Conditions: 150 mM KOAc, 10 mM MgCl2 and 150 mM bicine (pH 8.5), 24 C. Structure probing data (DMS and 2A3) for a 177-nucleotide construct. For 2A3 the reverse transcriptase was SuperScript II with manganese.

RNA sequence: GGGAACGACUCGAGUAGAGUCGAAAAUAAGACCGCCCUGGUGGAGCUGGAUGACUUUGCCAGCGGAACUUCCUCGAGAUCCACGAAACUUAUCCAUGGCGGAGUGCGAUAUCUGCAGAAGGCCAUACAUCACUAGCAGGUUCGCCUGCUAGUGAUGAAAAGAAACAACAACAACAAC
Reactivity to DMS in 0.01 (KOAc 150mM, MgCl2 10mM, bicine 150mM(pH8.5), 24C), signal-to-noise 2, nucleotides 027 to 126: u000a170a090g010a110c030c010g000c040c050c010u000g000g070u000g000g020a040g010c040u000g000g040a140u000g010a080c100u010u000u010g010c010c000a040g000c040g000g000a030a120c090u010u000c040c010u000c110g030a090g010a080u000c020c050a030c110g010a130a090a010c090u060u000a050u010c090c150a060u000g000g020c010g020g000a160g020u000g020c090g010a080u000a050u000c100u000g010c080a090g010a100a180g000g010c040c030a110u000a130
Reactivity to 2A3 in 0.01 (KOAc 150mM, MgCl2 10mM, bicine 150mM(pH8.5), 24C), signal-to-noise 1, nucleotides 027 to 126: u110a060a000g040a050c030c000g020c000c000c020u000g010g030u000g000g030a030g000c070u040g100g110a140u130g080a150c000u050u030u030g000c000c000a010g000c050g000g000a020a040c000u050u010c010c000u010c010g040a050g010a080u030c030c010a040c050g030a120a020a010c040u070u070a070u020c040c000a020u000g030g000c020g010g030a050g050u040g000c000g000a070u100a110u210c050u130g060c000a010g010a150a000g040g020c000c000a020u040a070

About this RNA:
For DMS the reverse transcriptase was MarathonRT.